[RMDB]
RNA sequence: GGGAACGACUCGAGUAGAGUCGAAAAGAUGACCGGUUCGCCGGUCAUCAAAUAGGGAAUCGGCGUGCGCGGCACCGUCCGCGGAACAAACGGAAAAUAAAAAAACGCUAACCUUCGGGUUAGCGAAGAUGUCAUUUUAGUUCGCUAAAAUGACAUCAAAAGAAACAACAACAACAAC
Reactivity to DMS in 0.01 (KOAc 150mM, MgCl2 10mM, bicine 150mM(pH8.5), 24C), signal-to-noise 3, nucleotides 027 to 126: g020a010u000g010a010c000c000g000g010u000u020c230g030c000c010g000g000u000c000a000u000c000a020a080a060u010a090g010g010g010a080a040u000c050g020g010c040g020u010g010c010g000c020g000g000c010a070c010c030g000u010c010c010g000c000g010g010a030a170c110a010a010a050c010g000g000a090a060a100a130u050a010a030a090a090a050a090a100c020g000c000u000a000a010c000c000u000u020c220g040g000g000u010u000a000g000c000g000a010a030
Reactivity to 2A3 in 0.01 (KOAc 150mM, MgCl2 10mM, bicine 150mM(pH8.5), 24C), signal-to-noise 4, nucleotides 027 to 126: g010a010u000g000a000c000c010g000g030u050u020c140g030c090c000g000g000u000c000a000u000c000a000a000a000u070a020g000g010g030a030a110u060c040g010g010c030g040u100g020c020g000c010g000g000c030a030c050c020g130u140c000c000g000c030g020g080a010a010c010a020a010a000c010g030g080a080a040a070a030u250a030a120a020a000a010a000a020c020g000c000u000a000a000c000c010u020u050c180g100g000g000u000u010a000g000c000g000a000a010